[RMDB]
RNA sequence: GGGAACGACUCGAGUAGAGUCGAAAAGCUUUAAUGAAGCAAUAGGGCACAAUGGAAAGCAUCCCAGCACUGGGGGAAGGGGGGCUCAUAGUUCAGAUAAUGACCUGAAACUUCAGAAGGAAGGGCAAUAGUUGCUAAGAUUCGUCUUAGCAACUAUAAAAGAAACAACAACAACAAC
Reactivity to 2A3 in 0.01 (KOAc 150mM, MgCl2 10mM, bicine 150mM(pH8.5), 24C), signal-to-noise 2, nucleotides 027 to 126: g040c010u060u080u130a160a060u250g070a070a010g000c000a040a200u130a300g040g000g020c050a010c060a130a100u130g050g000a140a050a000g000c010a020u030c010c000c000a000g030c050a010c070u090g000g010g010g000g020a020a010g020g010g020g000g050g000c010u020c040a030u080a010g030u060u000c020a000g000a030u100a140a070u180g040a050c000c000u020g030a060a040a050c030u080u080c000a030g040a090a010g080g020a030a050g010g010g000c030a030
Reactivity to DMS in 0.01 (KOAc 150mM, MgCl2 10mM, bicine 150mM(pH8.5), 24C), signal-to-noise 5, nucleotides 027 to 126: g000c030u000u010u020a110a120u010g010a060a070g030c030a150a150u000a090g020g010g030c050a060c110a080a100u020g010g010a050a050a070g020c040a110u010c020c020c000a120g000c090a090c100u000g010g010g000g020g020a090a060g000g000g000g000g000g010c080u010c070a040u000a050g010u010u000c030a040g010a090u010a070a130u010g000a100c100c010u010g000a040a040a090c060u000u000c100a050g020a100a110g000g010a060a030g010g010g000c140a060
The data come from the RNA Mapping Database (RMDB), library OK2TRN.
The record gives the reactivity of an RNA of 177 nucleotides to 2A3 and DMS.
The reactions ran in a buffer of 150 mM KOAc, 10 mM MgCl2 and 150 mM bicine (pH 8.5), at 24 C.
DMS adducts were read by reverse transcription with MarathonRT.